This 207-nucleotide RNA was probed chemically with 2A3 and DMS. For DMS, 8,469 sequencing reads were counted.
[RMDB]
RNA sequence: GGGAACGACUCGAGUAGAGUCGAAAACGCUGGGAACCGUAACAUCGUCCCGUGUGCUUGUCAGAAAGCACUGAAGCGCGCACGGUGCAUUUCUUGGAUUUAGCACACGGGACGUGGGUUCCUGUGCUGAAGCGCGCACGGCAACCGAAAGGUGCGACGCAUAUGAAAAGUUCGCUUUUCAUAUGCGAAAAGAAACAACAACAACAAC
Reactivity to 2A3 in 0.01 (KOAc 150mM, MgCl2 10mM, bicine 150mM(pH8.5), 24C), signal-to-noise 6, nucleotides 027 to 156: c030g010c010u020g000g000g010a010a000c010c000g060u240a190a160c080a210u270c030g000u000c000c000c010g000u000g000u000g000c100u250u300g040u040c010a010g010a010a000a000g020c000a010c020u010g050a190a070g010c040g000c020g000c020a020c010g010g010u020g010c160a300u000u020u020c030u050u200g210g030a160u280u230u300a020g000c000a000c000a000c010g000g000g000a000c010g000u010g000g000g000u010u000c000c000u010g020u030g000c010u060g020a070a010g010c030g000c010g020c000a010c010g070g000c040a120a110c010c000g070a090a040a020g030g010u040g020c020g010a010
Reactivity to DMS in 0.01 (KOAc 150mM, MgCl2 10mM, bicine 150mM(pH8.5), 24C), signal-to-noise 3, nucleotides 027 to 156: c060g020c020u000g010g000g000a020a030c010c030g030u000a090a250c100a080u000c020g020u000c020c010c010g040u000g020u010g030c030u010u000g010u020c080a050g020a030a060a100g010c010a010c000u000g010a040a110g010c040g020c030g010c040a300c040g020g000u000g000c010a100u000u000u010c020u000u000g030g020a180u000u000u000a050g000c000a010c010a010c030g020g000g010a000c000g010u010g010g020g010u000u000c000c010u010g000u000g030c000u000g010a060a070g010c030g050c020g040c030a070c040g010g010c040a050a240c020c030g010a090a180a250g020g020u000g010c000g010a200
The RNA was probed in 150 mM KOAc, 10 mM MgCl2 and 150 mM bicine (pH 8.5) at 24 C. For 2A3, 6,036 sequencing reads were counted.